Conditions: 150 mM KOAc, 10 mM MgCl2 and 150 mM bicine (pH 8.5), 24 C. Chemical mapping of a 177-nucleotide RNA with 2A3 and DMS. For DMS the reverse transcriptase was MarathonRT.
[RMDB]
RNA sequence: GGGAACGACUCGAGUAGAGUCGAAAAGGCAGGAGUAGAAUGGGCCGAAUCUAGGGUCUCACUGCAGGCCAGAUGCUACUUUUGUUUGGCGCACGGCCUGGUGAUUGAUCCGGCUGUGUUCUCCGCGCAAUAUUUUAAUAUUCGUAUUAAAAUAUUGAAAAGAAACAACAACAACAAC
Reactivity to 2A3 in 0.01 (KOAc 150mM, MgCl2 10mM, bicine 150mM(pH8.5), 24C), signal-to-noise 6, nucleotides 027 to 126: g050g000c050a030g000g030a010g000u050a020g050a110a030u070g020g020g010c000c000g000a020a040u070c070u120a060g070g030g050u000c020u010c030a050c040u200g060c040a000g020g000c010c000a040g020a100u090g010c010u010a030c000u140u130u110u160g140u080u110u130g050g000c020g000c030a020c060g010g000c000c010u030g000g010u020g010a150u080u200g020a010u020c010c000g000g000c000u050g030u020g000u120u000c010u000c000c000g010c010g000
Reactivity to DMS in 0.01 (KOAc 150mM, MgCl2 10mM, bicine 150mM(pH8.5), 24C), signal-to-noise 7, nucleotides 027 to 126: g000g010c010a080g010g000a040g010u020a040g000a070a060u020g010g010g000c010c010g010a080a070u030c100u020a100g010g010g010u010c060u010c010a020c020u010g020c050a010g020g010c000c010a080g010a160u020g000c000u000a030c060u010u030u030u030g010u010u030u020g010g010c070g010c090a180c170g000g010c000c000u010g010g000u000g000a060u040u020g010a020u000c010c000g000g000c030u000g010u010g000u010u000c020u000c010c020g000c110g000